[RMDB]
RNA sequence: GGGAACGACUCGAGUAGAGUCGAAAACGCCUGCCAUUCAGAUAACUUGAAAUCCAAUUUAGAAGAUCUUUUAAGCAAACCUAAAAGAUCAAGUUUGCUUACUAGAAGGUAAUGAUUAACAAAGUCAGAUCCUAAUUUAGUUCGCUAAAUUAGGAUCAAAAGAAACAACAACAACAAC
Reactivity to 2A3 in 0.01 (KOAc 150mM, MgCl2 10mM, bicine 150mM(pH8.5), 24C), signal-to-noise 2, nucleotides 027 to 126: c060g040c000c020u020g060c070c010a070u060u050c020a000g040a110u040a080a060c020u070u070g040a060a060a020u010c020c020a030a100u040u110u080a160g000a180a010g010a040u010c000u000u030u010u040a010a000g010c000a010a010a000c000c010u130a130a110a020a060g130a040u090c030a000a010g020u000u020u000g000c000u030u000a010c010u010a020g020a070a030g040g030u050a100a050u140g070a040u060u120a100a020c040a080a040a150g010u070c000a020
Reactivity to DMS in 0.01 (KOAc 150mM, MgCl2 10mM, bicine 150mM(pH8.5), 24C), signal-to-noise 3, nucleotides 027 to 126: c170g010c010c030u000g010c070c030a130u010u000c100a040g000a150u000a040a090c060u020u020g020a060a110a100u020c070c110a090a070u010u000u000a090g000a140a130g010a110u010c000u010u000u010u000a020a010g000c010a010a020a010c030c050u000a090a080a120a140g020a080u000c230a070a070g000u000u000u000g010c010u020u000a010c030u000a010g000a030a050g010g010u000a060a120u000g010a080u000u000a080a130c170a090a070a120g010u010c110a090